[RMDB]
RNA sequence: GGGAACGACUCGAGUAGAGUCGAAAAGAAAAAGACGAUAUAUAAUGUUACUGUUAGAAUAUUAAAUAUCGGCUAAAUAAUAGAAUAACAGUAACAUUUAUAGCCGAUAUAUUUAUCGUCGAGAAAAGGGAUGUGUAUCUUUCGAGAUACACAUCCCAAAAGAAACAACAACAACAAC
Reactivity to 2A3 in 0.01 (KOAc 150mM, MgCl2 10mM, bicine 150mM(pH8.5), 24C), signal-to-noise 1, nucleotides 027 to 126: g090a000a000a000a000a000g010a000c000g010a000u000a000u000a000u000a020a020u000g010u000u000a000c000u000g000u000u040a040g020a300a230u280a070u180u040a010a080a000u170a010u000c010g010g000c000u070a020a040a150u180a050a090u140a120g150a130a130u050a000a000c000a000g000u000a000a000c000a010u000u050u000a010u000a000g000c000c000g010a000u010a000u000a020u110u090u000a040u000c000g020u000c030g000a000g090a050a110a000a050